[RMDB]
RNA sequence: GGGAACGACUCGAGUAGAGUCGAAAAGAUAUGGAUCGCCACAGCAGCUUGGAUUUAGGGUCGGAAACGACCCUUGUCAGCUGGUGGCCGAUCCUAAGUCAAACACUAGUUCUUCGGAACUAGUGAAGGACAGAUGGUAGUUCGCUACCAUCUGUCCAAAAGAAACAACAACAACAAC
Reactivity to DMS in 0.01 (KOAc 150mM, MgCl2 10mM, bicine 150mM(pH8.5), 24C), signal-to-noise 1, nucleotides 027 to 126: g000a010u000a300u000g010g010a000u000c000g000c000c000a030c000a200g000c040a010g030c010u010u020g000g000a020u000u030u010a000g000g000g000u000c000g000g000a050a050a300c000g020a040c010c000c000u000u000g000u000c010a050g000c000u000g000g010u000g000g000c100c050g000a000u000c010c000u010a000a150g000u000c100a120a130a300c010a020c000u000a020g090u000u000c020u010u020c260g000g000a030a010c000u000a000g000u010g010a040a100
Reactivity to 2A3 in 0.01 (KOAc 150mM, MgCl2 10mM, bicine 150mM(pH8.5), 24C), signal-to-noise 1, nucleotides 027 to 126: g050a000u100a050u100g000g000a010u000c010g000c060c020a010c040a090g300c040a000g040c120u130u300g140g040a070u300u300u140a000g000g030g000u020c020g020g010a130a080a000c010g000a000c000c000c000u000u000g000u010c000a000g000c000u000g000g030u010g010g000c080c040g020a010u010c000c000u010a130a060g000u050c070a110a050a070c000a020c010u000a020g010u020u000c020u010u090c300g100g020a000a010c000u010a020g000u000g000a030a040

The data come from the RNA Mapping Database (RMDB), library TTRDES.
Chemical mapping of a 177-nucleotide RNA with DMS and 2A3.
For DMS, 1,405 sequencing reads were counted.
Values are in units of 0.01, from 0 to 300, in steps of 10.
Conditions: 150 mM KOAc, 10 mM MgCl2 and 150 mM bicine (pH 8.5), 24 C.